[RMDB]
RNA sequence: GGGAACGACUCGAGUAGAGUCGAAAAUAGGACUGCUUCGUACACUUAACAUUGCAACAGCAGGACCAACGGCUGCAAGGGAUGGAAUCAGAGAUGCAAUGAUUGGUAUAAGAGAAGAACUAAUAGCACCAAUGCUUCUGUUCGCAGAAGCAUUGGUAAAAGAAACAACAACAACAAC
Reactivity to DMS in 0.01 (KOAc 150mM, MgCl2 10mM, bicine 150mM(pH8.5), 24C), signal-to-noise 2, nucleotides 027 to 126: u010a000g030g000a250c030u000g010c030u000u010c160g040u020a040c080a030c100u000u000a100a090c060a120u000u030g030c000a050a120c160a130g010c030a030g000g010a160c100c010a050a100c110g010g000c010u010g010c010a050a050g010g000g010a070u000g000g010a050a180u000c040a040g000a060g010a120u000g020c050a020a080u010g000a060u000u010g000g000u020a030u020a060a120g000a090g010a050a060g000a120a070c070u010a070a060u000a080g010c250
Reactivity to 2A3 in 0.01 (KOAc 150mM, MgCl2 10mM, bicine 150mM(pH8.5), 24C), signal-to-noise 1, nucleotides 027 to 126: u080a030g010g020a040c030u000g020c000u120u020c090g060u070a020c030a020c040u110u060a120a010c040a070u040u070g010c040a040a020c010a100g010c000a010g000g050a010c020c010a000a020c020g050g020c020u020g000c010a040a080g030g010g050a070u080g020g030a030a030u040c000a010g010a010g020a120u060g070c000a020a030u050g060a120u070u110g080g000u100a050u060a180a080g050a000g020a050a020g000a040a060c030u070a030a100u090a140g090c020